[RMDB]
RNA sequence: GGGAACGACUCGAGUAGAGUCGAAAAGCUGGGUUGGGUGGCGCCAACUUGUAACGGGUAUGCUUCUGCUCGGGUAGUAAGGUGUGAGGGUUGUGGCAUGCGUUGUGUUGUCACUAUCCCCAGGAUGUGGAAGGCGCGUCCAUCUCAAACCAGGAGUCGAGUAUUACUUGUUCGCAAGUAAUACUCGAAAAGAAACAACAACAACAAC
Reactivity to 2A3 in 0.01 (KOAc 150mM, MgCl2 10mM, bicine 150mM(pH8.5), 24C), signal-to-noise 3, nucleotides 027 to 156: g040c010u020g000g040g040u040u020g020g020g000u050g070g030c000g000c000c010a030a040c010u060u090g130u130a100a020c060g010g010g000u090a100u190g060c070u060u060c030u050g000c000u030c000g030g100g000u040a060g060u060a080a070g130g010u080g030u080g070a190g020g000g010u000u060g010u000g000g000c010a030u100g050c070g020u050u080g030u040g000u000u010g000u010c010a000c040u060a050u170c020c000c000c010a000g090g000a060u090g030u090g060g050a120a060g050g000c020g000c030g040u020c010c020a030u030c060u000c040a030a030a030c010c000a020g000g010a010g050u010

The record gives the reactivity of an RNA of 207 nucleotides to 2A3. The reactions ran in a buffer of 150 mM KOAc, 10 mM MgCl2 and 150 mM bicine (pH 8.5), at 24 C. The data come from the RNA Mapping Database (RMDB), library ARCHII. 2A3 adducts were read by reverse transcription with SuperScript II with manganese.